[RMDB]
RNA sequence: GGGAACGACUCGAGUAGAGUCGAAAAAGCCAUUUCGAUGGCUGGCAGGCGUACUACCUGCGUCAUCGAUCAUUCGGCGCCUAGCAUGUCUCCCAAAUAGGAGACAUGGGUCGAAUGGGAGACGUCAGGUAUCGCGAUUACACCUAUUCGUAGGUAACACGUACUCCAAUUUCGAUUGGAGUACGUGAAAAGAAACAACAACAACAAC
Reactivity to 2A3 in 0.01 (KOAc 150mM, MgCl2 10mM, bicine 150mM(pH8.5), 24C), signal-to-noise 3, nucleotides 027 to 156: a000g030c020c010a020u070u120u200c270g150a010u020g000g000c000u010g070g080c120a080g020g110c020g040u070a130c080u010a000c030c010u020g030c000g010u000c010a280u170c040g060a130u120c000a010u000u010c010g050g010c040g160c090c110u100a110g040c020a010u010g000u030c000u020c000c010c010a210a300a200u220a090g000g000a010g000a000c000a000u020g020g010g010u010c000g000a000a000u000g000g030g000a050g010a010c040g010u250c040a010g010g010u010a030u300c010g000c010g000a010u030u180a080c060a050c040c010u020a030u040u150c220g040u150a000g020g020u040a030a030
Reactivity to DMS in 0.01 (KOAc 150mM, MgCl2 10mM, bicine 150mM(pH8.5), 24C), signal-to-noise 1, nucleotides 027 to 156: a020g020c020c000a080u000u000u000c110g040a020u000g020g020c010u000g000g040c100a060g010g000c010g060u000a150c040u000a010c010c000u000g000c010g010u000c010a140u000c100g040a250u000c010a020u000u000c030g050g010c010g020c140c030u010a230g000c010a030u010g020u000c010u000c000c000c000a050a120a190u010a060g010g010a020g000a040c020a010u000g010g020g030u000c010g070a020a030u000g000g000g000a200g000a030c010g000u000c050a020g010g020u000a010u000c060g020c040g000a180u000u010a100c080a040c000c010u000a080u000u000c150g000u000a110g010g000u000a110a300